[RMDB]
RNA sequence: GGGAACGACUCGAGUAGAGUCGAAAAAUCGACGUCGGACAUCACAUGGCGGCCGAACGGCUUGACAUCGGCCAAAUGCGGCACCCCCGACCCGAUCCGGCUGAAGUCCUGAAGCGAUAGUGCGACGCCCCAUAGAGUGCUUCGGCACUCUAUGGGGAAAAGAAACAACAACAACAAC
Reactivity to 2A3 in 0.01 (KOAc 150mM, MgCl2 10mM, bicine 150mM(pH8.5), 24C), signal-to-noise 2, nucleotides 027 to 126: a000u110c040g010a000c020g040u020c030g000g040a010c070a060u030c020a050c000a140u160g000g090c000g060g000c000c010g020a120a110c050g060g010c060u030u170g040a020c000a060u080c020g000g000c040c000a000a050a000u200g030c040g000g020c000a070c000c000c050c010c010g050a080c000c000c000g010a020u010c020c010g010g000c010u030g030a080a000g070u030c010c020u080g010a090a000g050c020g040a050u050a060g070u070g040c030g020a040c050g060
Reactivity to DMS in 0.01 (KOAc 150mM, MgCl2 10mM, bicine 150mM(pH8.5), 24C), signal-to-noise 2, nucleotides 027 to 126: a070u000c020g070a240c230g050u000c010g010g000a040c020a080u000c030a140c150a170u020g000g040c160g030g000c000c000g010a110a020c180g000g000c140u090u040g000a090c060a180u000c060g040g000c010c000a050a020a100u000g000c090g000g000c050a200c010c080c020c060c000g030a190c220c000c000g010a090u020c030c000g010g010c000u030g000a000a080g000u010c020c050u010g000a140a200g000c050g010a130u060a120g000u000g060c020g080a030c270g000
Chemical mapping of a 177-nucleotide RNA with 2A3 and DMS. In probing experiments dimethyl sulfate is read out at A N1 and C N3, which are open when not base-paired. For 2A3, 1,412 sequencing reads were counted. 2A3 is a SHAPE reagent: it acylates the 2'-hydroxyl of flexible nucleotides of all four kinds. The data come from the RNA Mapping Database (RMDB), library OK1LIB.